RNA sequence: GGGAACGACUCGAGUAGAGUCGAAAAAUGGUGUCAACGUAAAUGCAUGCCGCUUCGCCUUCCGGCCACCAGAAUAGCCUGCGAUUCAACCCCUUCUUCGAUCUGUUUUGCUACCCGUUGUAGCGCCAUUUAUAUUAUGCUUCGGCAUAAUAUAAAUAAAAGAAACAACAACAACAAC
Reactivity to DMS in 0.01 (KOAc 150mM, MgCl2 10mM, bicine 150mM(pH8.5), 24C), signal-to-noise 9, nucleotides 027 to 126: a070u010g010g020u000g010u000c050a060a070c090g020u010a060a080a090u000g010c060a080u010g010c040c020g010c070u000u000c070g010c030c030u000u000c050c040g010g010c050c030a050c050c040a090g010a110a090u000a100g010c040c020u000g010c060g000a120u000u000c080a080a140c060c020c020c040u000u000c050u000u000c060g010a070u000c060u000g000u000u000u000u000g010c030u000a080c040c130c110g010u000u010g010u000a050g010c030g010c090c070
Reactivity to 2A3 in 0.01 (KOAc 150mM, MgCl2 10mM, bicine 150mM(pH8.5), 24C), signal-to-noise 4, nucleotides 027 to 126: a000u090g040g010u050g030u050c030a040a020c070g080u090a100a070a080u150g030c030a010u070g020c000c000g010c040u040u040c020g020c020c000u050u030c020c000g020g020c000c000a030c020c000a030g050a100a050u040a020g020c020c010u030g040c050g080a090u090u080c030a050a140c000c000c000c010u050u060c010u040u030c040g070a100u040c030u050g070u050u100u060u040g010c010u020a040c010c070c100g120u070u130g010u040a020g010c000g010c010c000

Chemical mapping of a 177-nucleotide RNA with DMS and 2A3. Source: RMDB library OK2TRN, as collected in RNAgym. For 2A3 the reverse transcriptase was SuperScript II with manganese. The RNA was probed in 150 mM KOAc, 10 mM MgCl2 and 150 mM bicine (pH 8.5) at 24 C.